The record gives the reactivity of an RNA of 177 nucleotides to 2A3 and DMS. For 2A3 the reverse transcriptase was SuperScript II with manganese. Conditions: 150 mM KOAc, 10 mM MgCl2 and 150 mM bicine (pH 8.5), 24 C. For DMS the reverse transcriptase was MarathonRT. Source: RMDB library OK2TRN, as collected in RNAgym.
RNA sequence: GGGAACGACUCGAGUAGAGUCGAAAAUCUUGAACUCUCUGCCGCAGACCGCUGAAAUUUUGCUCUUCCGGUAACAGAAGUACAUGCGCAGCGUUGUCGAUAGUCUCUCUGUCAUCUUCUAAAGAGACAUACCGGUAGGUUUCGACCUACCGGUAUGAAAAGAAACAACAACAACAAC
Reactivity to 2A3 in 0.01 (KOAc 150mM, MgCl2 10mM, bicine 150mM(pH8.5), 24C), signal-to-noise 3, nucleotides 027 to 126: u000c010u010u070g070a060a030c010u010c000u010c040u100g040c030c030g040c010a020g020a040c020c010g020c040u030g020a050a160a180u190u210u090u100g010c010u010c000u090u000c030c030g030g040u050a100a030c030a070g030a100a000g030u070a020c040a050u090g050c040g000c030a020g030c010g090u040u090g050u040c010g030a030u070a030g020u030c010u000c000u010c010u040g040u070c020a100u030c080u160u000c030u130a190a060a030g050a020g040a030
Reactivity to DMS in 0.01 (KOAc 150mM, MgCl2 10mM, bicine 150mM(pH8.5), 24C), signal-to-noise 4, nucleotides 027 to 126: u000c050u000u000g010a080a170c070u000c030u000c020u010g000c060c050g010c070a130g020a070c060c030g000c050u020g000a050a070a130u000u010u010u000g010c040u000c030u000u000c040c030g000g000u010a080a120c080a030g000a040a040g000u000a040c070a060u000g010c130g010c030a040g010c060g010u000u010g010u000c030g010a080u000a070g010u000c040u000c010u000c040u000g010u010c040a080u000c060u010u010c060u010a080a090a100g000a130g010a080